[RMDB]
RNA sequence: GGGAACGACUCGAGUAGAGUCGAAAAAACAAACAUCAAAUCGCAUAGCAAAGAGUCAAAAAAAUAGAGAGCUUUGCGAGACCUACCAAGGGUGAAGGGAUACCAUCCAAGGAGCUGAAGAGAAAUCGAGAGCUCACGGCGUUCGCGCCGUGAGCAAGUUCAACCUAAUGUUCGCAUUAGGUUGAACAAAAGAAACAACAACAACAAC
Reactivity to 2A3 in 0.01 (KOAc 150mM, MgCl2 10mM, bicine 150mM(pH8.5), 24C), signal-to-noise 2, nucleotides 027 to 156: a020a000c130a080a080a010c080a120u130c030a020a090a070u020c020g010c030a010u030a030g000c010a080a150a000g040a070g120u130c100a080a100a130a130a010a070a020u280a050g090a010g010a040g050c020u030u060u030g010c000g000a020g010a010c000c010u060a060c040c030a050a080g050g010g000u040g050a070a060g050g010g020a020u060a080c040c020a050u020c020c010a020a030g030g000a000g010c060u060g030a070a000g030a040g040a070a080a040u090c090g000a020g010a000g240c000u000c000a000c000g000g030c000g040u080u070c130g030c020g000c000c000g000u000g000a000g000c010a000a000
The data come from the RNA Mapping Database (RMDB), library M2RFPK. The record gives the reactivity of an RNA of 207 nucleotides to 2A3. Reactivities are rounded to 0.1 and cut off at 0 and 3. Conditions: 150 mM KOAc, 10 mM MgCl2 and 150 mM bicine (pH 8.5), 24 C.